This 177-nucleotide RNA was probed chemically with 2A3 and DMS. The DMS profile rests on 3,720 reads. The reactions ran in a buffer of 150 mM KOAc, 10 mM MgCl2 and 150 mM bicine (pH 8.5), at 24 C. DMS adducts were read by reverse transcription with MarathonRT. The 2A3 profile rests on 3,513 reads.
[RMDB]
RNA sequence: GGGAACGACUCGAGUAGAGUCGAAAAAGAAUGCCACCACAUCAUCAUCGCUGAGCAGCUUGCGGGGCGCUUCAUCCUGACCAUGAGCAGCGGUAAGCUCGAAGGUACCAUGUUGCAGGCGAAGGUCGAGAGCGAACUAUUUCGAUAGUUCGCUCUCAAAAGAAACAACAACAACAAC
Reactivity to 2A3 in 0.01 (KOAc 150mM, MgCl2 10mM, bicine 150mM(pH8.5), 24C), signal-to-noise 4, nucleotides 027 to 126: a010g130a040a020u120g040c010c010a030c010c000a040c010a080u050c000a020u060c010a020u030c050g010c060u050g040a030g060c020a010g000c020u040u080g020c080g020g010g020g010c050g010c000u050u040c010a060u020c000c020u040g040a060c000c020a110u130g030a040g080c040a010g030c030g140g000u090a040a050g030c020u020c080g040a070a010g080g010u070a070c030c020a040u130g020u060u050g060c040a010g000g000c050g040a050a020g070g040u120c100
Reactivity to DMS in 0.01 (KOAc 150mM, MgCl2 10mM, bicine 150mM(pH8.5), 24C), signal-to-noise 3, nucleotides 027 to 126: a070g000a090a040u020g000c020c000a140c050c010a060c070a120u020c040a070u010c060a100u020c120g050c060u000g000a170g010c110a040g000c080u000u000g000c090g020g000g010g000c060g040c010u010u000c050a090u020c030c030u000g000a060c030c060a090u020g000a050g000c040a070g000c110g000g020u010a030a050g000c030u000c030g020a090a110g030g050u000a060c050c000a060u030g010u020u010g030c070a230g000g000c110g000a020a070g000g030u020c140